[RMDB]
Chemical mapping of a 177-nucleotide RNA with 2A3 and DMS. The RNA was probed in 150 mM KOAc, 10 mM MgCl2 and 150 mM bicine (pH 8.5) at 24 C. The 2A3 profile rests on 1,034 reads. The DMS profile rests on 876 reads. It was measured as part of the RMDB library RFMREP. For DMS the reverse transcriptase was MarathonRT.

RNA sequence: GGGAACGACUCGAGUAGAGUCGAAAACUGUGCUAUUCCAUCAGCCUACAGACCUGGUACCUGGAUUUUUGCCCGAGAUGAUUCCUACCACCUUACUACUGACGAAGACACCCAUUCCAGUGGACCACGUUAGGACAUGGUUCGCCAUGUCCUAACGAAAAGAAACAACAACAACAAC
Reactivity to 2A3 in 0.01 (KOAc 150mM, MgCl2 10mM, bicine 150mM(pH8.5), 24C), signal-to-noise 1, nucleotides 027 to 126: c000u040g010u090g090c010u050a060u150u000c020c000a120u050c020a020g070c030c010u060a030c010a030g070a100c000c020u030g000g040u030a050c010c000u060g100g060a070u080u060u050u020u140g060c000c000c030g030a010g000a050u090g020a020u070u030c000c000u020a090c020c030a030c000c010u060u150a080c000u000a020c000u020g030a040c040g020a050a020g060a010c010a070c030c000c010a040u100u000c010c010a020g030u050g020g000a020c000c000a040
Reactivity to DMS in 0.01 (KOAc 150mM, MgCl2 10mM, bicine 150mM(pH8.5), 24C), signal-to-noise 1, nucleotides 027 to 126: c040u000g000u020g000c100u010a120u010u010c060c050a110u000c050a050g000c040c020u000a040c090a070g000a110c040c000u000g040g020u000a050c090c040u020g010g010a040u000u000u010u010u000g000c010c010c030g010a090g010a070u000g010a210u000u000c010c020u000a070c100c040a050c030c030u010u000a090c060u020a080c080u000g010a150c120g020a060a080g010a070c080a060c000c020c030a110u000u000c040c030a060g000u020g010g000a110c060c040a130